Structure probing data (DMS and 2A3) for a 177-nucleotide construct. The DMS profile rests on 844 reads. 2A3 adducts were read by reverse transcription with SuperScript II with manganese. As a SHAPE reagent, 2A3 marks flexible, mostly unpaired nucleotides at the ribose 2'-OH. The data come from the RNA Mapping Database (RMDB), library TTRINS. Conditions: 150 mM KOAc, 10 mM MgCl2 and 150 mM bicine (pH 8.5), 24 C.
RNA sequence: GGGAACGACUCGAGUAGAGUCGAAAAGAUAUGGACUUAGAACUACUCCGGAUUCGUGGUAGGCUAAGACAGUAACUCGGAAACGAGUUAUCGAGCCUACCACGAAAUCGGAGCUAAGUCCUAAGUCGCACUAGUAAGUGUUCGCACUUACUAGUGCAAAAGAAACAACAACAACAAC
Reactivity to DMS in 0.01 (KOAc 150mM, MgCl2 10mM, bicine 150mM(pH8.5), 24C), signal-to-noise 1, nucleotides 027 to 126: g010a140u020a300u000g020g030a040c000u000u000a000g000a060a020c090u000a300c000u000c020c000g120g060a010u000u000c000g030u000g000g040u000a010g010g000c000u000a120a230g030a150c300a080g000u020a000a000c000u020c000g000g000a140a090a300c000g000a000g010u000u010a010u000c030g020a050g000c010c000u000a010c000c000a010c000g040a000a000a040u010c000g000g020a000g020c020u000a000a000g020u000c000c000u000a000a060g000u000c020
Reactivity to 2A3 in 0.01 (KOAc 150mM, MgCl2 10mM, bicine 150mM(pH8.5), 24C), signal-to-noise 1, nucleotides 027 to 126: g080a110u230a120u240g030g000a010c000u020u020a000g010a040a120c100u290a020c010u300c000c000g060g000a030u000u010c000g000u010g000g000u000a000g000g000c000u140a250a080g160a100c100a030g060u010a010a000c000u010c000g000g000a060a110a030c020g020a000g000u010u000a040u200c020g010a000g020c000c000u000a000c000c000a010c000g000a000a000a000u000c000g000g000a000g030c000u010a010a010g000u000c000c000u000a040a000g090u090c160